Chemical mapping of a 177-nucleotide RNA with DMS. DMS adducts were read by reverse transcription with MarathonRT. Values are in units of 0.01, from 0 to 300, in steps of 10. The data come from the RNA Mapping Database (RMDB), library M2PK50.
RNA sequence: GGGAACGACUCGAGUAGAGUCGAAAAUCUUAUAUGUUCGCAUAUAAGAAAAGGCGGAGUAGUGUUGGGUCGCGAAAGGCCUUAAAUUAACAAUCACUCAGAUACAGACCUGGUUCGCCAGGUCUAAAUGCUCUGUGAUAUUCGUAUCACAGAGCAUAAAAGAAACAACAACAACAAC
Reactivity to DMS in 0.01 (KOAc 150mM, MgCl2 10mM, bicine 150mM(pH8.5), 24C), signal-to-noise 2, nucleotides 027 to 126: u000c000u000u000a000u000a020u000g030u000u000c210g030c000a010u000a000u000a000a000g020a030a050a070a050g010g000c000g020g000a110g000u000a110g020u000g010u000u000g000g030g020u000c000g030c040g010a140a110a140g000g010c000c000u000u000a020a060a170u000u010a090a090c200a060a100u020c130a010c040u010c030a100g020a130u010a110c290a010g000a020c010c000u000g010g010u000u010c240g000c000c000a000g000g010u000c000u000a000a050